[RMDB]
RNA sequence: GGGAACGACUCGAGUAGAGUCGAAAAUCCUAAGUCAGAAUGACAGCUCGUUUGACGUGUAACAGAGGAAGUCGGAAACGACUUCCGACGAAGUUACACCGAGAGCUGGAGUUCUGAUAUGGAAAAACAUCUGCAACGGUUCGCCGUUGCAGAUGAACUUCUACAUGUGGUUCGCCACAUGUAGAAGAAAAGAAACAACAACAACAAC
Reactivity to DMS in 0.01 (KOAc 150mM, MgCl2 10mM, bicine 150mM(pH8.5), 24C), signal-to-noise 1, nucleotides 027 to 156: u000c000c040u000a080a170g000u020c000a030g000a040a030u000g040a300c020a040g030c000u000c000g050u000u000u020g030a100c110g000u000g020u010a030a020c000a100g030a300g000g020a040a100g010u000c020g050g000a170a190a290c040g030a060c020u020u000c000c000g030a150c120g030a190a230g000u000u000a000c000a000c010c010g000a110g000a030g020c000u000g060g000a300g020u000u000c000u010g030a040u010a070u020g000g010a040a150a130a170a150c000a030u000c010u000g000c000a060a010c000g080g000u000u000c220g020c040c000g010u010u000g020c000a000g000a000u000g000a080a070
Reactivity to 2A3 in 0.01 (KOAc 150mM, MgCl2 10mM, bicine 150mM(pH8.5), 24C), signal-to-noise 2, nucleotides 027 to 156: u030c000c000u010a070a030g020u000c000a000g010a020a020u030g010a050c010a000g010c000u010c040g200u110u230u250g150a140c050g010u090g000u000a010a010c010a030g010a030g020g000a010a000g000u000c010g050g030a100a070a060c020g000a000c000u000u010c000c000g010a010c000g000a060a010g000u000u000a000c010a010c000c010g090a060g000a000g060c000u000g000g000a000g000u000u000c000u000g000a000u000a040u060g030g060a010a090a050a080a030c000a000u010c000u020g030c000a000a010c000g000g060u060u060c260g030c130c000g000u000u000g000c000a000g000a000u000g000a000a000